[RMDB]
RNA sequence: GGGAACGACUCGAGUAGAGUCGAAAAGGUUCUCUGAAUGGAGUGCUCUACUGAGAUUAUAAAAUAGAAGGUAAGCUAUUAUCUCUUACAACAGGGCAGGGCUUGUUGGAAUAGGCGGUAAAGUCUAAAAACUACCUCACCUUCGGGUGAGGUAGAACAUACUUCACAAGUUCGCUUGUGAAGUAUGAAAAGAAACAACAACAACAAC
Reactivity to 2A3 in 0.01 (KOAc 150mM, MgCl2 10mM, bicine 150mM(pH8.5), 24C), signal-to-noise 2, nucleotides 027 to 156: g070g010u040u010c020u020c020u040g120a130a110u170g000g040a040g040u080g010c000u000c020u040a120c100u030g020a010g010a060u080u040a050u230a140a100a080a030u080a020g050a090a010g150g030u140a050a020g010c000u010a000u030u030a060u050c030u000c030u030u080a060c020a100a010c020a050g010g000g060c010a040g010g030g010c040u040u040g020u010u000g030g010a020a050u040a030g020g030c030g040g020u080a090a070a000g010u000c050u060a000a000a000a040a060c000u000a000c000c000u000c000a000c000c000u020u010c140g070g020g000u000g000a000g000g000u000a000g000a010a000
Reactivity to DMS in 0.01 (KOAc 150mM, MgCl2 10mM, bicine 150mM(pH8.5), 24C), signal-to-noise 1, nucleotides 027 to 156: g010g000u030u000c030u010c020u000g020a080a090u000g000g010a060g000u010g000c030u010c030u010a090c040u010g010a120g020a110u010u010a110u010a090a070a150a090u000a070g010a070a070g010g010u010a100a070g030c110u000a000u000u000a080u000c050u000c020u010u000a180c040a050a100c050a090g000g000g040c060a060g000g030g030c110u000u000g010u000u000g000g010a040a120u000a100g030g040c040g020g000u010a050a100a160g030u000c020u010a000a080a030a090a120c000u000a010c000c010u010c010a020c010c000u010u010c300g100g010g080u010g010a000g000g020u010a000g000a030a090
The data come from the RNA Mapping Database (RMDB), library M2RFPK. An RNA of 207 nucleotides, treated with 2A3 and DMS and read out base by base. DMS adducts were read by reverse transcription with MarathonRT. Conditions: 150 mM KOAc, 10 mM MgCl2 and 150 mM bicine (pH 8.5), 24 C. Values are in units of 0.01, from 0 to 300, in steps of 10. 2A3 adducts were read by reverse transcription with SuperScript II with manganese.